The record gives the reactivity of an RNA of 177 nucleotides to DMS and 2A3.
The data come from the RNA Mapping Database (RMDB), library OK1LIB.
The RNA was probed in 150 mM KOAc, 10 mM MgCl2 and 150 mM bicine (pH 8.5) at 24 C.
High 2A3 reactivity points to a flexible backbone, as in loops and unpaired stretches.
[RMDB]
RNA sequence: GGGAACGACUCGAGUAGAGUCGAAAAAUGGCUCGUGCGGACAUCGAACCCGAUCAGAAGGUUUUGUUUGCCCAGCGCAAAGUGGAGUUCCUUGAGGAUUUCGGCAGCACGGCCAGGGGUCUACAAGCCGUGCAGUCACUUUCGAGUGACUGCACGGAAAAGAAACAACAACAACAAC
Reactivity to DMS in 0.01 (KOAc 150mM, MgCl2 10mM, bicine 150mM(pH8.5), 24C), signal-to-noise 3, nucleotides 027 to 126: a090u030g000g010c030u000c060g040u010g010c080g000g010a050c170a120u040c060g000a020a030c150c010c020g030a120u080c230a150g030a210a100g000g020u020u030u000u020g000u000u000u000g000c010c020c080a090g010c160g040c050a060a050a030g060u010g000g010a170g000u030u010c030c000u020u000g000a220g030g000a060u000u000u010c020g000g020c070a210g020c060a010c030g000g010c010c050a050g010g010g040g020u030c010u020a120c090a100a030g000
Reactivity to 2A3 in 0.01 (KOAc 150mM, MgCl2 10mM, bicine 150mM(pH8.5), 24C), signal-to-noise 4, nucleotides 027 to 126: a000u080g010g000c050u070c250g000u020g010c020g050g040a070c030a110u080c090g020a070a070c030c000c000g010a160u090c040a020g160a280a050g090g000u020u030u090u050g130u040u070u010g000c010c020c020a090g030c070g000c150a090a050a030g110u160g090g060a050g010u140u170c030c000u060u120g140a220g060g020a070u040u060u040c000g020g000c020a010g000c020a030c000g030g000c000c000a010g030g040g000g000u020c030u120a150c040a120a000g020